Source: RMDB libraries RFM100 and RFMREP, as collected in RNAgym. An RNA of 177 nucleotides, treated with 2A3 and DMS and read out base by base. The reactions ran in a buffer of 150 mM KOAc, 10 mM MgCl2 and 150 mM bicine (pH 8.5), at 24 C. Values cover nucleotides 27 to 126.
RNA sequence: GGGAACGACUCGAGUAGAGUCGAAAAGGAACGGGUAUAAUCGAAAUCGAAAGAAGCGGACCCCGCGCAGGUGGCUAACCAGAUACGCGGGCGAUGCGGAUUUUCAGUUGCAAAGGCCGGGCUGCACAAUUCCUUCUGGAUUCGUCCAGAAGGAAUUAAAAGAAACAACAACAACAAC
Reactivity to 2A3 in 0.01 (KOAc 150mM, MgCl2 10mM, bicine 150mM(pH8.5), 24C), signal-to-noise 4, nucleotides 027 to 126: g080g010a070a030c050g000g000g060u110a060u070a120a100u110c090g010a140a070a020u110c050g000a040a050a040g050a040a010g010c000g010g010a030c000c000c000c000g000c010g000c010a050g030g030u040g030g130c080u090a060a060c010c000a010g030a100u160a060c000g010c000g010g000g000c010g000a000u010g000c000g000g010a010u080u060u000u000c020a000g040u020u040g100c070a100a050a030g060g000c050c010g000g030g000c000u070g000c040a040c030
Reactivity to DMS in 0.01 (KOAc 150mM, MgCl2 10mM, bicine 150mM(pH8.5), 24C), signal-to-noise 7, nucleotides 027 to 126: g010g000a090a050c100g010g020g020u030a070u010a070a090u020c090g010a060a070a080u000c100g000a010a020a030g010a300a160g000c000g000g000a300c300c000c010c000g040c010g010c160a100g020g010u020g000g030c230u040a080a080c020c020a110g010a140u020a080c000g000c010g020g010g030c000g000a210u070g000c000g000g000a210u000u000u000u010c030a050g000u010u010g000c110a030a110a060g000g010c020c010g010g010g020c020u010g010c070a080c110
For 2A3 the reverse transcriptase was SuperScript II with manganese. For DMS the reverse transcriptase was MarathonRT.